RNA sequence: GGGAACGACUCGAGUAGAGUCGAAAAUAAAGGGCACGAACGGUGCACCACGCAAUAGGUUCACCAUGGUGGCUAACGAUAGCAUGUUCGCGUUGGCUGGAAGAGCAGCGGUGUAGCAUGACGACCCACUGAUGGAAUAGGCGGCCGAGCACAUGGCGAACCUGCUAUUCUUCGGAAUAGCAGGUUCAAAAGAAACAACAACAACAAC
Reactivity to 2A3 in 0.01 (KOAc 150mM, MgCl2 10mM, bicine 150mM(pH8.5), 24C), signal-to-noise 2, nucleotides 027 to 156: u140a010a100a020g070g040g000c000a010c040g140a250a040c150g050g000u010g010c050a030c010c020a010c040g100c010a080a130u120a250g040g000u040u030c000a020c010c000a030u100g070g000u040g020g030c060u070a050a000c010g080a040u060a070g040c030a010u060g040u060u040c030g000c010g010u010u050g120g030c030u070g000g130a060a050g020a000g070c000a020g000c060g000g060u070g040u080a010g000c010a000u010g030a040c030g110a110c000c010c010a050c050u050g050a080u090g020g040a040a080u090a060g070g010c000g000g000c010c020g000a010g000c040a030c030a060u060g010g020c030

Notes
Source: RMDB library RSTRND, as collected in RNAgym. This 207-nucleotide RNA was probed chemically with 2A3. For 2A3 the reverse transcriptase was SuperScript II with manganese. The reactions ran in a buffer of 150 mM KOAc, 10 mM MgCl2 and 150 mM bicine (pH 8.5), at 24 C.